[RMDB]
RNA sequence: GGGAACGACUCGAGUAGAGUCGAAAAUGAAGGUGAAAGCCCUGUUCGCGGGUGUCGACAUCUAGACCAUGCCCUUAGCUCCACGAGUAGGAAUGUCUGAAAGUGCAUUCUGAAUGGGUGAUAAGAUAGUACCUAGGUGAUUCGUCACCUAGGUACUAAAAGAAACAACAACAACAAC
Reactivity to 2A3 in 0.01 (KOAc 150mM, MgCl2 10mM, bicine 150mM(pH8.5), 24C), signal-to-noise 4, nucleotides 027 to 126: u110g020a050a000g050g020u050g040a110a050a020g020c010c010c010u010g100u080u090c160g000c050g020g030g000u100g070u090c020g030a020c000a020u000c020u020a030g070a050c010c000a040u080g020c050c000c000u040u040a010g000c020u050c050c030a270c070g020a020g000u000a000g000g010a010a010u010g020u020c040u070g080a140a140a080g090u100g020c000a000u010u000c000u000g040a040a080u220g010g010g000u060g010a080u070a060a010g020a080u070
Reactivity to DMS in 0.01 (KOAc 150mM, MgCl2 10mM, bicine 150mM(pH8.5), 24C), signal-to-noise 2, nucleotides 027 to 126: u010g030a140a020g000g010u010g000a050a110a280g000c030c010c000u020g020u000u000c060g050c020g000g000g020u030g000u000c050g000a300c030a000u000c020u000a050g020a170c070c070a060u000g000c040c020c000u000u010a180g020c000u000c030c020a070c110g020a110g000u000a100g000g000a020a010u000g020u000c100u020g010a080a040a110g030u010g000c020a000u000u000c000u000g010a130a130u030g000g000g000u000g000a040u000a040a100g000a140u010